[RMDB]
RNA sequence: GGGAACGACUCGAGUAGAGUCGAAAAGCCUUACGAUUCGUCGUAAGGCAUACAAAGUUUUGGCACUAUGAGCCCGCAGCGUUGGUGCUCCCACGCGGUGCAAUACGACGGAUUUCGAUCCGUCGAAAGGUAUAGUACAGUUCGCUGUACUAUACCUAAAAGAAACAACAACAACAAC
Reactivity to DMS in 0.01 (KOAc 150mM, MgCl2 10mM, bicine 150mM(pH8.5), 24C), signal-to-noise 9, nucleotides 027 to 126: g000c000c000u000u000a000c000g000a020u000u010c190g030u000c000g020u000a010a010g010g020c000a010u000a020c140a090a100a130g010u000u000u000u000g010g010c020a050c080u000a110u000g000a110g000c030c010c060g010c070a130g010c060g000u010u000g010g000u010g000c160u000c050c040c020a060c080g010c040g010g010u000g000c050a100a080u010a150c020g000a010c000g000g000a020u000u000u010c170g010a020u000c000c000g000u000c000g000a010a050
Reactivity to 2A3 in 0.01 (KOAc 150mM, MgCl2 10mM, bicine 150mM(pH8.5), 24C), signal-to-noise 9, nucleotides 027 to 126: g000c000c000u000u000a000c000g010a010u030u070c200g040u000c000g000u140a000a000g000g000c000a000u030a010c030a000a120a030g010u040u070u140u160g070g000c020a010c050u110a090u290g070a040g020c020c020c030g000c030a100g010c030g070u150u160g050g020u150g070c060u110c020c010c000a030c020g020c030g020g020u040g010c010a030a070u130a120c020g000a000c000g000g010a010u050u050u100c160g070a020u010c000c000g000u000c000g000a030a010
Record summary: The record gives the reactivity of an RNA of 177 nucleotides to DMS and 2A3. For 2A3, 43,294 sequencing reads were counted. The RNA was probed in 150 mM KOAc, 10 mM MgCl2 and 150 mM bicine (pH 8.5) at 24 C.